The record gives the reactivity of an RNA of 177 nucleotides to 2A3 and DMS. Source: RMDB library M2PK50, as collected in RNAgym. 2A3 adducts were read by reverse transcription with SuperScript II with manganese.
[RMDB]
RNA sequence: GGGAACGACUCGAGUAGAGUCGAAAAUGGACAUCUUUCGAGAUGUCCAAAAUACCGUGAAUGCGACUCGGUAAAUAAAACGCACCCUUGGAAACAAGGGAAAAAACCAGUUCUUCGGAACUGGUAACAUUAGGGAAUAAUUCGUUAUUCCCUAAUGAAAAGAAACAACAACAACAAC
Reactivity to 2A3 in 0.01 (KOAc 150mM, MgCl2 10mM, bicine 150mM(pH8.5), 24C), signal-to-noise 1, nucleotides 027 to 126: u040g000g000a000c000a000u010c010u030u080u040c100g050a010g010a010u010g010u000c010c000a000a020a000a010u030a000c000c010g010u000g030a100a050u040g010c010g040a030c010u000c010g050g030u070a060a040a030u050a000a030a020a000c010g020c000a020c020c000c000u000u000g020g010a030a040a020c010a010a000g000g000g000a100a080a000a010a000a030c000c000a000g010u010u000c010u030u070c210g090g000a010a000c000u000g000g000u000a030a000
Reactivity to DMS in 0.01 (KOAc 150mM, MgCl2 10mM, bicine 150mM(pH8.5), 24C), signal-to-noise 6, nucleotides 027 to 126: u000g000g010a020c000a010u000c000u000u000u020c150g030a030g010a010u000g000u000c000c000a010a020a060a100u010a230c010c010g020u000g000a070a100u000g010c020g010a190c060u000c020g010g000u010a070a050a080u000a030a010a020a050c030g010c030a050c010c000c000u000u000g000g010a130a110a190c010a010a010g000g000g010a000a020a040a050a050a010c000c000a010g000u000u000c000u000u010c190g030g000a010a000c000u000g000g000u000a020a070
The reactions ran in a buffer of 150 mM KOAc, 10 mM MgCl2 and 150 mM bicine (pH 8.5), at 24 C.